An RNA of 177 nucleotides, treated with 2A3 and DMS and read out base by base. For 2A3 the reverse transcriptase was SuperScript II with manganese. Reactivities are given for positions 27 through 126. DMS adducts were read by reverse transcription with MarathonRT. Reactivities are rounded to 0.1 and cut off at 0 and 3.
RNA sequence: GGGAACGACUCGAGUAGAGUCGAAAACGGCCCCAGCGGGUGUCUGGUCGGAUUCGGCUGGGCAAUGCGGCGCCUUUUGGGCCUCGUCGACCACGUCGUGGCGGUAGAUCUCGCCGAGCUGCGCCGCACAGGUAGGCAUAUUCGUAUGCCUACCUGUAAAAGAAACAACAACAACAAC
Reactivity to 2A3 in 0.01 (KOAc 150mM, MgCl2 10mM, bicine 150mM(pH8.5), 24C), signal-to-noise 8, nucleotides 027 to 126: c020g040g010c010c000c010c000a040g040c070g060g070g020u040g020u020c010u040g070g010u040c030g040g120a200u300u210c020g020g000c000u020g000g010g000c000a000a040u100g010c010g000g010c000g000c020c010u070u080u070u110g060g000g000c010c010u020c010g040u010c000g040a300c010c020a070c060g300u210c100g010u060g010g020c000g000g010u070a090g030a130u040c070u030c090g050c020c010g010a020g000c060u060g000c010g000c000c000g000c000
Reactivity to DMS in 0.01 (KOAc 150mM, MgCl2 10mM, bicine 150mM(pH8.5), 24C), signal-to-noise 4, nucleotides 027 to 126: c130g000g000c030c020c000c150a060g020c100g000g000g010u010g000u000c030u000g010g010u010c020g000g010a210u030u040c010g010g000c000u010g000g010g010c020a050a030u010g020c000g000g000c020g000c020c050u010u010u020u020g000g040g000c030c040u000c090g000u000c020g000a100c030c030a050c050g000u030c190g020u000g000g010c020g000g000u010a090g000a090u010c060u010c100g010c090c040g000a060g000c080u010g000c030g000c010c000g020c020